Structure probing data (DMS and 2A3) for a 177-nucleotide construct.
Conditions: 150 mM KOAc, 10 mM MgCl2 and 150 mM bicine (pH 8.5), 24 C.
For 2A3, 2,503 sequencing reads were counted.
For 2A3 the reverse transcriptase was SuperScript II with manganese.
RNA sequence: GGGAACGACUCGAGUAGAGUCGAAAAGAUAUGGAAUCGGUGGACAUGCCUAUCUCGGAAACGAGUAAGGGCAACAGCCAUACGAUUCCUAAGUCAAAAUCUCUCCACUGUUCGCAGUGGAGAGAAACUAUGACAGUUUCUUCGGAAACUGUCAUAGAAAAGAAACAACAACAACAAC
Reactivity to DMS in 0.01 (KOAc 150mM, MgCl2 10mM, bicine 150mM(pH8.5), 24C), signal-to-noise 2, nucleotides 027 to 126: g010a040u010a300u010g000g000a000a020u000c000g000g000u000g000g010a080c100a180u000g010c000c000u000a300u010c000u020c010g000g010a080a040a120c000g000a000g010u000a100a260g000g000g010c000a030a040c200a080g010c000c000a000u000a130c000g010a030u000u000c000c000u000a010a040g000u000c040a090a060a100a130u000c000u000c000u000c000c000a010c010u000g000u010u000c170g010c000a000g000u010g000g010a000g000a000g000a010a020a030
Reactivity to 2A3 in 0.01 (KOAc 150mM, MgCl2 10mM, bicine 150mM(pH8.5), 24C), signal-to-noise 2, nucleotides 027 to 126: g000a010u010a010u060g010g030a000a010u020c030g000g010u000g000g040a100c130a260u170g030c010c010u070a060u140c010u010c000g040g040a030a030a020c010g010a000g010u030a120a240g020g030g030c010a050a050c120a040g060c020c000a030u170a270c020g000a010u000u000c000c000u000a020a010g000u000c010a010a030a030a300u030c000u010c000u000c000c000a010c010u010g070u090u090c300g000c170a000g000u010g000g000a000g000a000g000a000a010a000